[RMDB]
RNA sequence: GGGAACGACUCGAGUAGAGUCGAAAAUACCAAGGGCCAUUGAGAUUGAGGCGCGGCGGUUUUCAUCUCAGGCGAGGGGACCGACGGAUCGUUCGUUACUCCAUGAGUGGCGAGCGGUCUGUGGUUCGUGGAAUAUUGAGUUCGCUCAAUAUUCCACAAAAGAAACAACAACAACAAC
Reactivity to DMS in 0.01 (KOAc 150mM, MgCl2 10mM, bicine 150mM(pH8.5), 24C), signal-to-noise 3, nucleotides 027 to 126: u020a190c010c010a090a110g010g020g000c000c040a120u040u000g020a040g000a040u010u020g020a070g000g000c010g010c090g020g000c050g000g010u010u010u010u000c050a090u000c040u000c030a070g000g010c030g020a140g000g000g000g010a010c020c010g000a030c020g010g000a000u000c010g000u000u000c000g010u000u000a020c010u010c000c270a210u030g000a020g010u010g000g000c000g000a000g000c000g000g000u010c000u000g000u000g000g010u000u000c020
Reactivity to 2A3 in 0.01 (KOAc 150mM, MgCl2 10mM, bicine 150mM(pH8.5), 24C), signal-to-noise 8, nucleotides 027 to 126: u150a020c020c010a030a060g120g060g010c020c020a070u080u130g030a020g020a070u090u150g030a040g030g010c030g000c070g150g000c060g070g000u030u020u060u030c020a040u000c010u000c010a030g010g010c040g040a090g010g070g010g010a000c010c020g100a020c010g020g000a000u010c000g000u010u000c000g010u000u010a000c000u020c070c120a230u300g010a000g000u000g000g000c000g000a000g000c000g000g000u000c000u000g000u000g000g000u010u010c030
The record gives the reactivity of an RNA of 177 nucleotides to DMS and 2A3. DMS adducts were read by reverse transcription with MarathonRT. Values are in units of 0.01, from 0 to 300, in steps of 10.